Source: RMDB library TTRDEL, as collected in RNAgym. Structure probing data (2A3 and DMS) for a 177-nucleotide construct.

RNA sequence: GGGAACGACUCGAGUAGAGUCGAAAAGAUAUGGACACUCAUAGCAAGUGUGGUCGGAAACGACCAUAUGAUGACCUAUAAGAGUGUCCUAAGUCAAAACCUGCUAUAACUUCGGUUAUAGCAGGAACUACAGGAUCACGUUCGCGUGAUCCUGUAGAAAAGAAACAACAACAACAAC
Reactivity to 2A3 in 0.01 (KOAc 150mM, MgCl2 10mM, bicine 150mM(pH8.5), 24C), signal-to-noise 2, nucleotides 027 to 126: g030a030u040a000u100g010g010a000c000a000c020u010c010a000u020a000g100c080a300a300g020u000g000u000g000g000u000c000g030g020a030a030a050c010g020a000c010c000a010u000a000u010g000a030u110g180a240c020c020u030a040u040a260a160g030a000g020u030g010u030c000c000u050a010a020g000u000c020a000a000a110a260c000c010u000g010c000u020a000u000a010a000c010u090u080c270g180g010u030u010a000u020a000g000c010a000g010g000a010a000
Reactivity to DMS in 0.01 (KOAc 150mM, MgCl2 10mM, bicine 150mM(pH8.5), 24C), signal-to-noise 1, nucleotides 027 to 126: g010a040u000a300u020g000g000a010c000a000c010u000c010a020u000a010g040c070a080a120g020u000g000u000g030g010u000c000g020g000a060a080a250c010g000a010c000c010a000u030a000u000g010a080u010g020a130c300c010u000a000u010a110a130g010a000g080u040g000u010c000c000u000a000a110g000u000c020a210a050a080a110c000c000u010g010c000u000a010u000a020a010c010u000u040c220g000g000u000u000a000u000a000g010c000a020g000g000a000a080